Record summary: This 177-nucleotide RNA was probed chemically with 2A3 and DMS. For 2A3 the reverse transcriptase was SuperScript II with manganese. For 2A3, 2,524 sequencing reads were counted. Values cover nucleotides 27 to 126. The DMS profile rests on 1,113 reads.
RNA sequence: GGGAACGACUCGAGUAGAGUCGAAAAGAUAUGGAAUGCAAGGGAGAAGUGUCGGAAACGACCCUUCAUCGAUCUUGACAUUCCUAAGUCAAAGGAACUACUAGUUCUUCGGAACUAGUAGUUCCAACCGUGGAGGAAUGUUCGCAUUCCUCCACGGAAAAGAAACAACAACAACAAC
Reactivity to 2A3 in 0.01 (KOAc 150mM, MgCl2 10mM, bicine 150mM(pH8.5), 24C), signal-to-noise 1, nucleotides 027 to 126: g040a030u070a040u180g000g010a020a000u000g010c000a000a010g030g020g010a040g010a010a010g000u000g010u020c000g000g000a080a080a030c010g000a000c050c030c020u000u010c020a150u300c010g040a040u020c010u000u070g080a070c030a000u000u000c000c000u010a070a040g000u020c060a050a010a200g000g000a010a000c000u000a010c000u000a000g010u020u020c000u010u060c300g000g000a010a010c010u000a000g000u000a000g000u000u000c000c010a010a000
Reactivity to DMS in 0.01 (KOAc 150mM, MgCl2 10mM, bicine 150mM(pH8.5), 24C), signal-to-noise 1, nucleotides 027 to 126: g000a060u010a300u000g030g000a020a000u000g000c010a020a040g040g000g000a040g020a040a010g030u000g030u000c030g010g000a110a060a170c010g000a040c000c050c000u000u000c000a230u010c120g010a060u010c000u000u010g000a190c000a000u010u010c000c000u010a020a060g010u010c020a090a150a080g010g000a000a000c000u010a030c000u000a000g000u010u000c010u020u000c230g030g000a010a020c000u000a000g000u000a000g010u000u000c000c010a000a060